[RMDB]
RNA sequence: GGGAACGACUCGAGUAGAGUCGAAAAUCAUUGAGAUGCUGGGCGCUAUGGGCGUCCUCCUCCGGCUGACCUCCUUCUCAGCUGCUGACCGGCGCCGCACAGGCGGCAUCUCAGCUUCGUGUGCAAAAAAAGAAUGGUCGGUUCGCCGACCAUUCAAGUAUAUAACAACCUUCGGGUUGUUAUAUACAAAAGAAACAACAACAACAAC
Reactivity to DMS in 0.01 (KOAc 150mM, MgCl2 10mM, bicine 150mM(pH8.5), 24C), signal-to-noise 2, nucleotides 027 to 156: u000c030a120u010u000g000a030g020a010u000g000c010u000g020g020g000c020g070c010u010a090u000g040g000g050c020g010u000c000c010u000c000c010u010c010c010g020g000c020u000g010a100c070c080u000c070c070u000u000c070u000c020a070g020c010u000g000c020u010g010a090c090c100g000g000c060g080c010c010g030c180a110c170a170g060g030c040g020g000c020a010u010c010u010c010a080g000c120u000u010c080g000u010g000u010g020c010a000a000a070a120a110a080a180g010a040a000u000g000g010u000c010g020g030u000u010c300g030c030c010g000a020c000c000a000u000u000c000a010a150
Reactivity to 2A3 in 0.01 (KOAc 150mM, MgCl2 10mM, bicine 150mM(pH8.5), 24C), signal-to-noise 2, nucleotides 027 to 156: u140c040a050u060u070g000a000g000a000u020g000c020u060g020g040g010c030g000c070u120a240u290g140g100g000c010g020u000c000c000u020c000c000u020c000c010g020g000c010u000g020a020c020c060u080c020c020u180u090c040u000c030a020g010c020u030g020c110u070g030a060c040c170g010g000c000g000c000c010g110c040a160c010a100g030g000c000g000g000c030a000u010c000u000c000a000g000c030u120u120c100g110u070g040u050g080c070a050a070a000a000a000a130a070g010a010a010u010g000g010u000c000g000g020u020u050c160g010c080c000g000a000c010c000a000u010u000c000a000a000